[RMDB]
Conditions: 150 mM KOAc, 10 mM MgCl2 and 150 mM bicine (pH 8.5), 24 C. Structure probing data (2A3 and DMS) for a 177-nucleotide construct.

RNA sequence: GGGAACGACUCGAGUAGAGUCGAAAACUCUGAUGAGCUGAGGGUAGGAGUGAAAGGCUAAUCAAACCCCGUGAUAGCUGGUUCUCUUCGAAAUGCAUUUAGGUGCAGCGUCACGUGCUGAUGCGCGGUGACAACUCACUUUCGAGUGAGUUGUCACAAAAGAAACAACAACAACAAC
Reactivity to 2A3 in 0.01 (KOAc 150mM, MgCl2 10mM, bicine 150mM(pH8.5), 24C), signal-to-noise 4, nucleotides 027 to 126: c020u010c020u040g100a100u030g040a070g030c050u030g020a050g010g070g020u070a020g020g020a030g000u060g050a050a030a010g040g000c030u060a050a070u040c030a110a050a240c010c020c000c010g000u000g000a020u020a060g010c020u020g040g130u130u020c070u010c000u040u050c070g060a100a060a060u140g020c050a020u050u040u180a100g040g000u020g000c010a030g000c010g060u050c020a020c050g070u040g010c030u100g020a080u140g010c050g000c010g020
Reactivity to DMS in 0.01 (KOAc 150mM, MgCl2 10mM, bicine 150mM(pH8.5), 24C), signal-to-noise 3, nucleotides 027 to 126: c030u010c030u030g000a100u000g010a090g010c030u000g000a050g000g020g020u010a080g000g000a060g010u010g000a070a120a210g000g000c010u000a060a140u020c070a070a060a130c050c000c030c030g000u020g010a040u010a010g030c000u010g000g010u000u000c020u010c010u020u000c060g000a030a040a110u020g000c060a050u010u020u010a090g010g010u000g000c010a020g000c080g020u000c020a090c070g030u030g000c040u000g010a100u000g000c000g000c050g010
Source information:
For 2A3, 4,140 sequencing reads were counted.